The record gives the reactivity of an RNA of 177 nucleotides to DMS and 2A3. 2A3 adducts were read by reverse transcription with SuperScript II with manganese. DMS adducts were read by reverse transcription with MarathonRT. The reactions ran in a buffer of 150 mM KOAc, 10 mM MgCl2 and 150 mM bicine (pH 8.5), at 24 C.
RNA sequence: GGGAACGACUCGAGUAGAGUCGAAAAGAUAUGGAAAUGGGGACGAUCGAUAAGCAGUUAUCGGAAACGAUAAUACUGCUUUUGACGAUCGCCUAUUUCCUAAGUCAAAGCCAUGUUCGCAUGGCAACCCAUAAGUUAGCUUCGGCUAACUUAUGGGAAAAGAAACAACAACAACAAC
Reactivity to DMS in 0.01 (KOAc 150mM, MgCl2 10mM, bicine 150mM(pH8.5), 24C), signal-to-noise 3, nucleotides 027 to 126: g020a040u000a300u010g000g000a000a000a000u010g010g020g020g000a140c030g010a020u000c000g010a180u000a020a030g020c010a010g000u000u000a020u010c010g020g000a130a080a180c010g010a010u000a030a090u010a060c020u010g010c000u000u010u000u000g000a210c150g000a000u000c000g000c010c000u000a010u010u000u000c000c000u000a000a100g010u010c040a130a150a100g020c000c000a010u000g000u000u010c240g050c020a040u000g010g000c010a060a070
Reactivity to 2A3 in 0.01 (KOAc 150mM, MgCl2 10mM, bicine 150mM(pH8.5), 24C), signal-to-noise 3, nucleotides 027 to 126: g000a000u070a020u100g000g010a000a000a010u030g010g010g020g120a120c030g010a010u020c000g030a070u030a150a010g000c000a020g020u020u000a000u000c010g020g060a050a040a030c000g000a000u010a070a100u100a120c010u010g020c000u040u010u010u040g120a050c050g000a010u010c000g000c000c000u010a000u000u010u000c010c000u010a090a010g060u020c060a150a040a030g000c000c000a000u010g040u040u140c300g000c170a000u010g010g000c010a030a100